An RNA of 177 nucleotides, treated with 2A3 and DMS and read out base by base.
The RNA was probed in 150 mM KOAc, 10 mM MgCl2 and 150 mM bicine (pH 8.5) at 24 C.
[RMDB]
RNA sequence: GGGAACGACUCGAGUAGAGUCGAAAAGGGCAUAUCUUCGGAUAUGCCCAAACGUCGAAAAGGAAAAGUCGCAUGCGUCGAUCGAACAAGGUCGCAUGCGACAAACUCGGAGGUUCGCCUCCGAGAACCAAGAGUAUCGGUUCGCCGAUACUCUUGGAAAAGAAACAACAACAACAAC
Reactivity to 2A3 in 0.01 (KOAc 150mM, MgCl2 10mM, bicine 150mM(pH8.5), 24C), signal-to-noise 1, nucleotides 027 to 126: g000g000g000c000a000u010a000u000c030u040u070c210g040g000a000u000a010u000g000c000c000c000a010a000a000c000g100u090c050g100a020a020a020a020g090g070a040a060a020a050g010u000c010g000c000a010u010g000c020g040u040c030g030a150u070c080g030a100a100c070a190a140g210g000u020c000g000c000a000u000g000c010g000a000c000a000a000a000c010u000c000g000g000a010g040g000u100u050c230g070c060c000u000c000c000g020a000g000a000a010
Reactivity to DMS in 0.01 (KOAc 150mM, MgCl2 10mM, bicine 150mM(pH8.5), 24C), signal-to-noise 2, nucleotides 027 to 126: g020g030g010c000a000u000a010u000c000u010u030c160g010g000a000u000a000u000g000c010c000c000a020a010a040c120g020u040c030g020a020a040a060a020g020g000a020a080a130a120g010u000c010g000c000a000u000g000c000g040u010c040g010a060u020c190g010a100a180c300a060a080g000g010u000c000g030c000a010u000g000c020g000a000c000a000a020a110c000u000c000g000g010a010g000g000u000u030c300g010c020c000u000c000c030g000a000g000a040a150